[RMDB]
RNA sequence: GGGAACGACUCGAGUAGAGUCGAAAAUGCUCUUGGAACUAUGUGUGAAGCCUCAAUCAUCCGCCUGUCUCGCAAGUUCUUCGCCCGUACCGCCGACCUCGCCGCAAGCGGAGCAAUGUGCUCGCAACCAUUACGCACUCUUCGGAGUGCGUAAUGGAAAAGAAACAACAACAACAAC
Reactivity to DMS in 0.01 (KOAc 150mM, MgCl2 10mM, bicine 150mM(pH8.5), 24C), signal-to-noise 2, nucleotides 027 to 126: u000g000c000u000c010u030u010g020g000a100a100c120u000a090u020g010u010g000u020g000a070a130g020c040c020u000c070a070a080u010c080a090u020c070c070g010c000c040u000g020u000c020u000c030g010c050a040a070g010u010u010c030u000u000c100g010c000c000c030g010u010a080c080c050g000c020c030g010a070c050c020u000c030g020c040c040g020c130a070a080g030c020g030g000a060g000c060a090a120u020g030u020g020c020u000c020g020c070a100a130
Reactivity to 2A3 in 0.01 (KOAc 150mM, MgCl2 10mM, bicine 150mM(pH8.5), 24C), signal-to-noise 1, nucleotides 027 to 126: u090g020c030u030c040u060u100g070g030a020a000c030u070a110u140g100u030g010u030g090a050a020g000c000c000u070c000a030a100u030c000a140u020c030c030g030c040c020u070g080u040c020u000c050g070c030a080a060g030u000u050c000u050u040c010g000c000c000c000g000u050a090c020c060g000c010c000g050a090c020c040u030c050g070c060c030g030c040a120a000g020c060g100g000a050g000c050a040a240u250g010u080g120c010u000c010g040c020a020a040